[RMDB]
RNA sequence: GGGAACGACUCGAGUAGAGUCGAAAAGGGUGGCCAUCUGACCGUCGACAUGCUGCUGCAACCCGAGGUCGCCGCCCGACCUCCGGCGGCGGUGGUGUUGUUUUCGCCGCUGAUCGACCUCACCUUCCUAGUUGAUAGGUUUCGACCUAUCAACUAGAAAAGAAACAACAACAACAAC
Reactivity to 2A3 in 0.01 (KOAc 150mM, MgCl2 10mM, bicine 150mM(pH8.5), 24C), signal-to-noise 6, nucleotides 027 to 126: g040g010g010u020g020g000c060c050a160u090c100u130g070a090c030c050g140u060c010g020a030c010a060u140g010c020u030g020c030u070g000c010a030a020c010c010c020g000a050g000g060u040c020g000c030c010g010c010c020c000g060a090c010c010u040c030c010g000g020c010g010g000c010g010g010u060g010g030u090g020u060u030g030u020u040u020u080c020g010c020c000g000c010u010g020a120u060c020g020a050c010c000u040c020a070c010c000u040u060c000
Reactivity to DMS in 0.01 (KOAc 150mM, MgCl2 10mM, bicine 150mM(pH8.5), 24C), signal-to-noise 7, nucleotides 027 to 126: g000g000g030u010g000g010c060c150a090u000c100u000g000a120c100c050g010u000c040g010a060c090a080u000g010c020u010g010c050u000g010c020a040a060c050c030c060g010a120g020g010u000c040g010c050c050g010c050c050c030g000a090c060c040u000c040c080g000g010c160g000g010c000g010g010u000g000g010u000g010u000u000g000u000u000u000u000c100g010c020c030g010c020u000g000a070u010c050g000a130c020c060u000c060a120c080c040u000u000c060